[RMDB]
RNA sequence: GGGAACGACUCGAGUAGAGUCGAAAAUUAAACCGGUACUAUCUAUGCGACUUGAAGCCUCCACGAGUCAAAACCGAAAGGGCAUAGAUAGUACCGCAUGAAGGAGGCACGUGCAUAAGAAAAAAAACACACCUUAAAGUUUCGACUUUAAGGUGUGAAAAGAAACAACAACAACAAC
Reactivity to DMS in 0.01 (KOAc 150mM, MgCl2 10mM, bicine 150mM(pH8.5), 24C), signal-to-noise 1, nucleotides 027 to 126: u000u010a000a150a120c060c020g030g000u000a000c000u010a000u000c000u000a020u010g000c010g020a000c010u000u000g000a080a020g060c000c020u000c010c010a270c010g010a000g000u000c000a160a110a190a090c000c010g000a070a120a170g000g020g020c020a000u000a000g000a010u000a010g000u000a000c000c000g020c000a000u000g000a010a040g000g020a000g020g000c020a090c020g010u010g010c010a180u020a120a130g010a020a000a000a030a030a060a050a140
Reactivity to 2A3 in 0.01 (KOAc 150mM, MgCl2 10mM, bicine 150mM(pH8.5), 24C), signal-to-noise 2, nucleotides 027 to 126: u090u020a140a060a020c030c010g000g000u000a000c000u010a000u010c000u000a010u000g010c000g010a020c010u000u020g040a190a020g000c000c000u000c000c010a050c040g000a010g000u000c030a080a230a250a150c030c000g040a060a020a010g000g020g000c000a000u000a000g020a000u010a000g000u000a000c000c000g010c000a000u010g030a120a030g000g000a000g000g000c000a000c000g000u000g000c000a030u210a260a080g160a090a070a010a020a000a000a010a010
Structure probing data (DMS and 2A3) for a 177-nucleotide construct.
Values cover nucleotides 27 to 126.
The 2A3 profile rests on 2,332 reads.
For DMS the reverse transcriptase was MarathonRT.